[RMDB]
RNA sequence: GGGAACGACUCGAGUAGAGUCGAAAACAUAGCGUUUCACAAUGUGCGCCAUUAACAUUGUUUAUGCAAGCACGUUUCGCAAUGUACGGCGCAGAAACAUUGCCGACACAAAUACGCUUCACGAUGUAAAACAUCGGUGCGUUCGCGCACCGAUGAAGUUACUAAAACUCUUCGGAGUUUUAGUAACAAAAGAAACAACAACAACAAC
Reactivity to DMS in 0.01 (KOAc 150mM, MgCl2 10mM, bicine 150mM(pH8.5), 24C), signal-to-noise 3, nucleotides 027 to 156: c060a100u000a060g020c010g030u000u000u000c070a030c020a060a060u000g030u010g020c020g050c020c040a220u000u010a070a060c020a020u000u000g010u000u000u000a080u010g040c050a100a130g020c080a140c060g000u000u000u000c130g000c040a050a010u000g040u000a050c090g020g030c020g040c010a090g000a160a090a130c010a040u000u000g010c000c030g050a080c080a120c070a070a070a120u000a060c050g020c020u000u000c060a060c060g000a170u000g000u010a050a070a150a250c010a020u000c010g010g030u000g000c010g000u000u000c220g000c040g050c040a020c000c000g000a010u000g000a000a060
Reactivity to 2A3 in 0.01 (KOAc 150mM, MgCl2 10mM, bicine 150mM(pH8.5), 24C), signal-to-noise 8, nucleotides 027 to 156: c030a050u130a020g010c010g020u020u090u130c070a040c020a050a020u040g010u020g030c000g020c020c010a080u180u200a080a010c010a010u020u030g070u060u120u110a130u140g070c100a070a090g100c070a050c200g010u030u110u120c050g000c010a000a000u010g000u020a020c070g000g000c020g000c010a010g030a010a080a010c010a010u010u030g040c080c080g080a030c030a000c010a200a160a010u140a040c030g010c010u090u080c100a090c110g090a090u120g040u260a010a060a070a040c010a000u000c000g010g010u000g000c000g000u030u040c110g030c000g000c030a000c000c010g000a000u000g000a010a000